Source: RMDB library OK3TST, as collected in RNAgym.
An RNA of 207 nucleotides, treated with 2A3 and DMS and read out base by base.
The DMS profile rests on 2,475 reads.
Values cover nucleotides 27 to 156.
The reactions ran in a buffer of 150 mM KOAc, 10 mM MgCl2 and 150 mM bicine (pH 8.5), at 24 C.
High DMS reactivity at an A or C suggests that its Watson-Crick edge is free.
RNA sequence: GGGAACGACUCGAGUAGAGUCGAAAAAUUAGCCAGGUGUGGUGAUGCACAACUGUAGUCCCAGCUACUUGGGAGGCUGAGGUAUGAGAAUCACUUGAACCCAGGAAGCAGCAGUUGCAGUGAACCAAGAUCGUGCCACUGCACUCCAGCCUGUGUGUGUAGGAAACUUUUUCGAAAGUUUCCUACAAAAAGAAACAACAACAACAAC
Reactivity to 2A3 in 0.01 (KOAc 150mM, MgCl2 10mM, bicine 150mM(pH8.5), 24C), signal-to-noise 2, nucleotides 027 to 156: a010u060u060a020g010c000c010a020g020g000u030g020u030g090g030u040g020a060u080g040c020a050c000a090a090c050u060g040u180a070g060u020c010c000c020a040g050c010u110a090c050u010u060g000g020g080a010g090g010c010u020g020a030g130g100u080a010u120g060a060g050a140a080u090c010a000c010u040u090g030a030a060c020c010c010a020g050g010a070a030g040c140a000g000c000a010g000u000u020g000c000a020g010u030g030a070a060c050c020a110a130g100a160u140c090g060u030g060c070c000a010c010u000g000c000a010c000u000c000c000a000g010c010c010u090g100u090g040u040g000
Reactivity to DMS in 0.01 (KOAc 150mM, MgCl2 10mM, bicine 150mM(pH8.5), 24C), signal-to-noise 1, nucleotides 027 to 156: a170u050u000a110g010c050c030a050g070g050u000g040u020g020g010u000g000a200u000g000c050a060c000a060a070c030u000g030u000a090g010u010c000c010c010a100g020c070u000a100c070u000u070g000g030g030a050g000g060c060u000g010a090g020g000u000a090u000g040a110g020a110a100u000c050a040c040u000u000g000a110a130c030c010c020a150g030g000a100a060g010c050a170g020c110a060g030u000u000g000c000a060g010u000g050a170a110c030c020a100a080g000a110u000c070g010u000g030c050c030a130c030u000g000c010a030c020u000c030c000a080g000c020c020u000g010u000g030u010g020